Structure probing data (2A3 and DMS) for a 177-nucleotide construct. For 2A3 the reverse transcriptase was SuperScript II with manganese. The 2A3 profile rests on 88,950 reads. High DMS reactivity at an A or C suggests that its Watson-Crick edge is free. It was measured as part of the RMDB library OK1LIB. The RNA was probed in 150 mM KOAc, 10 mM MgCl2 and 150 mM bicine (pH 8.5) at 24 C.
[RMDB]
RNA sequence: GGGAACGACUCGAGUAGAGUCGAAAAGAUGACUUUCAGGAGUGCGAGCCAUAUCUACGCGAGAUGUAACUUCAUUGUCUCAAGGGAAGUGAAGCACGAUAGUGGCCUACUUCCACUCAAUGAAAGAGAUAGGUGUCGAGUUCGCUCGAUAUCUAUCAAAAGAAACAACAACAACAAC
Reactivity to 2A3 in 0.01 (KOAc 150mM, MgCl2 10mM, bicine 150mM(pH8.5), 24C), signal-to-noise 9, nucleotides 027 to 126: g110a060u140g020a020c000u000u010u000c010a010g020g010a000g000u010g010c090g020a020g000c000c000a010u010a010u010c020u040a040c090g030c050g110a060g020a130u180g060u100a040a030c000u010u000c000a030u020u110g180u090c030u020c100a050a070g130g020g000a010a000g000u010g020a030a000g010c060a020c130g010a010u030a040g230u070g010g000c000c010u070a090c040u130u000c010c000a000c000u000c000a030a160u020g000a000a000a000g050a000
Reactivity to DMS in 0.01 (KOAc 150mM, MgCl2 10mM, bicine 150mM(pH8.5), 24C), signal-to-noise 9, nucleotides 027 to 126: g010a100u030g000a150c010u000u000u000c010a020g010g000a020g010u010g020c230g000a120g000c010c010a020u010a020u000c000u010a100c130g000c080g010a120g010a150u030g000u010a120a170c020u000u000c010a020u000u000g000u020c070u010c090a090a120g010g010g000a030a020g010u000g000a050a050g010c080a100c200g000a030u010a020g030u010g000g000c110c090u020a090c160u030u030c170c000a010c020u000c000a030a070u000g000a000a010a010g010a160